[RMDB]
RNA sequence: GGGAACGACUCGAGUAGAGUCGAAAAUGCUGAGCUUUCGAGCUCAGCAGAGGCAAGCAAGCAGCGCAACGAGACAUGACGAGCAUAAGAUCGAGCAUGCUACAAUACGGCACUUCGGUGCCGUAAACAGUUUAGUCGAGUUCGCUCGACUAAACUGAAAAGAAACAACAACAACAAC
Reactivity to DMS in 0.01 (KOAc 150mM, MgCl2 10mM, bicine 150mM(pH8.5), 24C), signal-to-noise 2, nucleotides 027 to 126: u000g030c000u040g020a000g010c020u000u000u010c160g000a020g100c000u000c000a000g010c000a000g020a080g000g010c060a060a160g000c090a010a080g030c040a050g020c090g000c050a060a040c090g000a050g010a080c090a080u000g010a070c060g000a050g030c040a090u010a040a090g020a050u020c010g000a080g020c020a060u000g010c020u010a060c130a080a150u000a000c000g000g000c000a010c000u000u020c190g010g000u000g000c010c020g000u000a000a060a080
Reactivity to 2A3 in 0.01 (KOAc 150mM, MgCl2 10mM, bicine 150mM(pH8.5), 24C), signal-to-noise 1, nucleotides 027 to 126: u030g000c000u010g000a010g010c010u070u000u230c200g070a000g000c010u020c010a000g020c000a000g000a010g050g000c070a030a050g040c010a020a040g010c020a020g000c030g000c030a040a030c030g070a030g030a070c030a020u030g040a040c030g030a010g020c020a100u110a260a040g040a080u060c030g000a020g060c000a000u030g000c000u110a040c050a030a020u050a040c010g000g030c000a000c010u020u060c080g060g000u010g000c000c000g000u000a010a020a000